This 177-nucleotide RNA was probed chemically with DMS and 2A3. The reactions ran in a buffer of 150 mM KOAc, 10 mM MgCl2 and 150 mM bicine (pH 8.5), at 24 C. It was measured as part of the RMDB library OK1LIB. Values are in units of 0.01, from 0 to 300, in steps of 10.

[RMDB]
RNA sequence: GGGAACGACUCGAGUAGAGUCGAAAACGGUUUGGCCACCGUCCUGCUGGCCCCCUACGGCACCCGUGGCAUCGUGCUGACCACCUUGGCAGCGCUGGUGCUGGGCGCGGCCGGACUGCUCGGCGUGCAAAAUCGAGCGAUUCGUCGCUCGAUUUUGAAAAGAAACAACAACAACAAC
Reactivity to DMS in 0.01 (KOAc 150mM, MgCl2 10mM, bicine 150mM(pH8.5), 24C), signal-to-noise 2, nucleotides 027 to 126: c050g030g000u020u000u000g020g000c020c000a120c010c030g000u010c080c060u000g010c170u010g040g040c010c010c010c020c050u010a070c090g000g000c020a160c020c020c020g030u050g000g000c000a010u000c010g100u000g010c000u000g000a160c020c050a200c230c250u020u020g000g020c000a010g000c000g080c010u050g010g000u020g000c000u000g020g000g000c100g010c110g000g020c030c000g000g030a080c030u000g020c030u010c030g000g000c010g060u000g010
Reactivity to 2A3 in 0.01 (KOAc 150mM, MgCl2 10mM, bicine 150mM(pH8.5), 24C), signal-to-noise 3, nucleotides 027 to 126: c020g030g000u010u030u120g040g010c000c000a020c010c010g050u000c000c000u060g010c060u040g030g010c000c010c000c000c010u060a050c040g030g000c020a040c000c020c020g100u140g030g000c010a030u040c030g010u030g000c000u040g120a300c000c030a090c040c090u240u300g020g000c030a010g010c010g000c140u170g010g000u000g020c010u050g010g020g000c050g000c000g030g000c010c020g000g000a040c010u060g000c020u030c020g030g000c020g040u100g010